An RNA of 207 nucleotides, treated with DMS and 2A3 and read out base by base. The RNA was probed in 150 mM KOAc, 10 mM MgCl2 and 150 mM bicine (pH 8.5) at 24 C. Source: RMDB library M2RFPK, as collected in RNAgym. The 2A3 profile rests on 1,926 reads.

RNA sequence: GGGAACGACUCGAGUAGAGUCGAAAAUGAAGCAAAUCCAUAAUUGCCAAUGAUGAGCAGUUCGCUAUUGCCGCCUAAAAACGGUUAGCCGGGGCUGCUAGAGCCUUGUUACCAAAGAUAGCCGGCGUUACGGCAUGAUGGUUCGCCAUCAUGCCAAGGUAAUUCUGACUUUCGAGUCAGAAUUACCAAAAGAAACAACAACAACAAC
Reactivity to DMS in 0.01 (KOAc 150mM, MgCl2 10mM, bicine 150mM(pH8.5), 24C), signal-to-noise 1, nucleotides 027 to 156: u000g000a080a150g000c010a080a120a150u010c040c050a070u000a060a100u010u010g000c040c040a100a090u000g010a090u000g010a150g040c040a010g000u000u000c030g000c000u000a040u000u030g000c000c000g020c010c020u000a090a130a100a030a090c030g020g010u010u000a030g010c000c030g000g000g020g000c000u010g030c080u000a020g050a160g030c000c030u010u000g000u000u000a150c070c060a110a070a090g020a130u000a030g030c010c070g010g030c010g000u010u000a040c070g000g040c010a000u000g000a000u000g010g030u000u010c300g040c020c000a020u000c000a000u020g010c000c010a000a030
Reactivity to 2A3 in 0.01 (KOAc 150mM, MgCl2 10mM, bicine 150mM(pH8.5), 24C), signal-to-noise 3, nucleotides 027 to 156: u130g020a060a020g030c040a060a040a060u120c080c030a050u130a130a130u170u060g010c000c030a090a080u160g060a050u080g030a050g010c000a010g030u010u100c040g000c020u020a030u080u130g020c020c020g000c000c000u080a080a050a000a000a010c000g030g000u050u010a010g000c010c040g050g000g030g000c010u000g010c030u030a020g030a010g040c000c020u060u030g030u050u120a050c020c040a190a030a000g030a080u020a040g040c030c030g030g000c030g070u100u130a030c070g000g020c000a000u010g000a000u000g000g040u040u070c170g010c020c000a020u000c000a000u010g020c020c000a010a000